Notes
The data come from the RNA Mapping Database (RMDB), library TTRINS. An RNA of 177 nucleotides, treated with DMS and 2A3 and read out base by base. Reactivities are given for positions 27 through 126. For 2A3, 4,120 sequencing reads were counted. For 2A3 the reverse transcriptase was SuperScript II with manganese.
[RMDB]
RNA sequence: GGGAACGACUCGAGUAGAGUCGAAAAGAUAUGGACUACUCCCCACCGCACAACUUCCAUCGAUCUCUCUAAGAGUCGGAAACGACUCUUAGAGAGGGAGGAAGGUGUGCGAGGUAGUCCUAAGUCAGAUCAGAUGUAUGUUCGCAUACAUCUGAUCAAAAGAAACAACAACAACAAC
Reactivity to DMS in 0.01 (KOAc 150mM, MgCl2 10mM, bicine 150mM(pH8.5), 24C), signal-to-noise 2, nucleotides 027 to 126: g020a120u030a200u010g010g020a020c000u000a010c010u000c220c040c000c040a300c170c000g000c000a010c000a030a020c000u000u000c010c000a300u000c220g010a070u010c010u000c000u000c000u000a000a050g010a010g000u000c020g000g000a110a080a190c010g000a000c000u000c010u000u000a020g020a020g020a010g010g000g010a030g020g000a010a000g000g000u000g040u000g000c010g010a010g010g000u000a000g000u000c000c000u010a020a100g000u010c190a130
Reactivity to 2A3 in 0.01 (KOAc 150mM, MgCl2 10mM, bicine 150mM(pH8.5), 24C), signal-to-noise 1, nucleotides 027 to 126: g090a080u300a190u250g010g010a010c000u010a000c040u150c050c030c030c040a010c000c020g000c010a000c000a020a070c020u030u040c010c030a220u300c100g040a080u000c000u000c000u000c000u010a010a000g000a010g020u000c010g000g000a050a070a000c020g000a000c020u030c000u000u000a000g000a000g000a000g000g000g000a010g000g010a000a010g030g000u020g010u000g030c030g000a000g000g000u010a000g000u010c000c000u030a070a020g210u220c170a070
DMS adducts were read by reverse transcription with MarathonRT. For DMS, 1,931 sequencing reads were counted.